[RMDB]
RNA sequence: GGGAACGACUCGAGUAGAGUCGAAAAUGACCUGGAUUCGGCCGAGUGAAGCCUGCAACGCAGUCCGUUGAGGGCUCGCCAGGUCUCACUACUUCAUUCCACCCUCUUGUCCGUGCGGCGAAUGUGCGCAUGGUACGGGGUUCGCCCCGUGCCAUGUAAAAGAAACAACAACAACAAC
Reactivity to 2A3 in 0.01 (KOAc 150mM, MgCl2 10mM, bicine 150mM(pH8.5), 24C), signal-to-noise 9, nucleotides 027 to 126: u110g020a020c000c010u010g030g020a050u060u060c050g030g000c010c010g020a020g030u060g040a060a010g020c000c000u020g050c020a020a010c010g040c060a020g090u050c020c010g010u020u070g080a090g000g000g000c000u000c000g000c000c000a000g000g000u000c000u000c000a030c020u100a020c010u050u080c010a060u070u020c010c010a030c010c010c000u030c010u040u070g020u000c010c010g020u030g020c010g010g000c010g030a080a040u080g020u040g040c030
Reactivity to DMS in 0.01 (KOAc 150mM, MgCl2 10mM, bicine 150mM(pH8.5), 24C), signal-to-noise 8, nucleotides 027 to 126: u020g000a040c030c010u000g000g000a120u010u010c070g010g020c020c050g010a130g000u010g010a080a070g000c010c000u010g000c060a060a060c030g000c170a110g010u020c060c000g010u030u040g000a210g000g000g010c000u000c030g010c050c010a030g010g010u000c020u000c070a050c040u000a090c080u010u010c070a070u010u010c030c020a070c020c020c010u000c040u020u010g010u000c020c040g000u010g000c040g000g000c030g000a050a050u020g010u000g010c090